[RMDB]
RNA sequence: GGGAACGACUCGAGUAGAGUCGAAAAACUUUUAGCGAUUAUCGUAAUAGAAAUGUCCUUGGCAUAUCGCUAUGCACAGAGGUAUUAGUAGCGCAAUAGCUAUUGAAGGACAUUACCUCUCAAAUAAAGCUGAAACCAUAUUCGUAUGGUUUCAGCUAAAAGAAACAACAACAACAAC
Reactivity to 2A3 in 0.01 (KOAc 150mM, MgCl2 10mM, bicine 150mM(pH8.5), 24C), signal-to-noise 2, nucleotides 027 to 126: a020c040u120u070u030u060a010g000c020g020a010u180u000a040u180c070g000u050a080a070u010a280g100a050a070a020u020g020u000c020c000u020u040g130g010c040a020u010a030u180c020g000c020u020a040u100g120c150a110c070a150g060a020g020g100u070a040u090u080a050g050u000a020g000c020g000c060a110a160u050a030g000c000u010a020u020u150g050a040a010g030g000a010c030a000u010u000a000c000c020u040c000u000c050a000a100a130u200a110a220
Reactivity to DMS in 0.01 (KOAc 150mM, MgCl2 10mM, bicine 150mM(pH8.5), 24C), signal-to-noise 2, nucleotides 027 to 126: a080c070u010u000u010u000a010g020c010g010a040u000u010a070u000c060g020u010a080a120u020a110g010a060a060a030u000g000u000c000c000u010u000g010g000c020a030u000a000u000c030g000c020u000a000u000g040c070a140c220a060g000a030g000g000u000a020u000u010a050g020u000a000g000c030g000c140a060a070u010a150g000c010u000a000u000u000g010a080a030g000g010a070c090a040u000u000a000c030c010u000c030u000c210a050a040a090u000a050a130

Source information:
Structure probing data (2A3 and DMS) for a 177-nucleotide construct. Values are in units of 0.01, from 0 to 300, in steps of 10. 2A3 adducts were read by reverse transcription with SuperScript II with manganese. DMS adducts were read by reverse transcription with MarathonRT. For DMS, 1,461 sequencing reads were counted. Conditions: 150 mM KOAc, 10 mM MgCl2 and 150 mM bicine (pH 8.5), 24 C.